[RMDB]
RNA sequence: GGGAACGACUCGAGUAGAGUCGAAAAACGGCAUAAGCGAGGAUGACGCUAUCGCCAGCAUCCACCGGAUCUUCAAAAAUGAUGCCGCGCCGGAAGAUAUCGCCGCCAUCGUGAUUGAGCCGGUUCAGACUAGUCCGUCAUUCGUGACGGACUAGUCAAAAGAAACAACAACAACAAC
Reactivity to DMS in 0.01 (KOAc 150mM, MgCl2 10mM, bicine 150mM(pH8.5), 24C), signal-to-noise 2, nucleotides 027 to 126: a100c150g000g040c020a070u090a100a130g010c080g000a050g030g010a170u070g020a130c000g000c000u000a010u000c180g000c010c000a170g020c070a110u010c080c020a020c050c000g020g000a090u000c030u000u010c050a020a010a060a120a070u010g000a000u000g030c130c060g010c140g010c240c020g010g000a120a130g000a080u010a070u030c030g020c150c000g000c030c000a030u020c030g020u010g010a220u010u010g010a070g010c000c010g000g000u020u010c180a040
Reactivity to 2A3 in 0.01 (KOAc 150mM, MgCl2 10mM, bicine 150mM(pH8.5), 24C), signal-to-noise 2, nucleotides 027 to 126: a000c050g000g000c060a090u080a190a070g020c040g020a030g100g070a080u130g070a060c020g010c010u040a020u050c060g020c010c000a000g030c010a030u020c020c000a000c010c000g040g000a090u060c030u190u020c200a020a030a000a000a010u060g020a010u020g050c030c010g000c080g030c040c030g090g010a050a070g090a250u220a050u220c010g010c010c000g000c000c000a010u010c000g000u000g000a060u020u010g000a010g040c020c010g020g020u010u080c010a000
An RNA of 177 nucleotides, treated with DMS and 2A3 and read out base by base. DMS adducts were read by reverse transcription with MarathonRT. The reactions ran in a buffer of 150 mM KOAc, 10 mM MgCl2 and 150 mM bicine (pH 8.5), at 24 C. For DMS, 858 sequencing reads were counted. The 2A3 profile rests on 1,525 reads.